[RMDB]
RNA sequence: GGGAACGACUCGAGUAGAGUCGAAAAUAUAGCCUAGGUAUGUAGUAGGCUAUACUAUCUAGGUUUGAGUAAGUACAUUCUAUGAUGUUCGCACAACGAAAUCACCUAACAAUGCAUUUCUCAGAACAUACCGGAUUUCUCAGAACAUAUCGCUGUAGCUACUCGUAUCAUUCGUGAUACGAGUAGCAAAAGAAACAACAACAACAAC
Reactivity to 2A3 in 0.01 (KOAc 150mM, MgCl2 10mM, bicine 150mM(pH8.5), 24C), signal-to-noise 5, nucleotides 027 to 156: u110a020u030a000g000c000c000u010a020g010g000u040a040u160g030u020a130g110u010a020g060g000c000u000a000u000a010c020u020a020u000c000u050a190g030g000u040u030u050g050a050g020u160a090a000g030u050a040c010a040u040u030c080u180a120u110g020a010u030g160u110u020c020g020c040a090c020a200a120c090g020a000a020a020u040c020a030c020c060u090a120a030c060a060a040u020g020c020a030u000u060u000c040u000c010a030g040a120a050c040a060u110a070c010c020g030g000a030u030u060u010c020u000c020a030g040a070a030c030a040u090a010u070c080g040c120u130g030u170a020
Reactivity to DMS in 0.01 (KOAc 150mM, MgCl2 10mM, bicine 150mM(pH8.5), 24C), signal-to-noise 1, nucleotides 027 to 156: u000a070u000a020g030c000c000u000a130g010g010u000a040u000g020u000a040g000u010a140g010g020c080u000a070u010a020c050u000a070u000c000u000a090g030g010u010u000u020g010a110g040u000a020a040g060u000a020c040a030u000u000c000u000a090u000g000a000u000g050u000u010c030g040c120a160c240a100a210c020g000a100a070a090u000c000a010c010c060u000a120a080c100a040a020u000g030c040a070u000u000u010c000u010c030a050g020a070a130c100a170u000a200c030c040g030g010a070u000u000u000c000u000c020a180g030a000a060c030a060u000a020u000c050g040c040u040g000u000a180
Conditions: 150 mM KOAc, 10 mM MgCl2 and 150 mM bicine (pH 8.5), 24 C. Structure probing data (2A3 and DMS) for a 207-nucleotide construct. In probing experiments dimethyl sulfate is read out at A N1 and C N3, which are open when not base-paired. For 2A3, 4,068 sequencing reads were counted.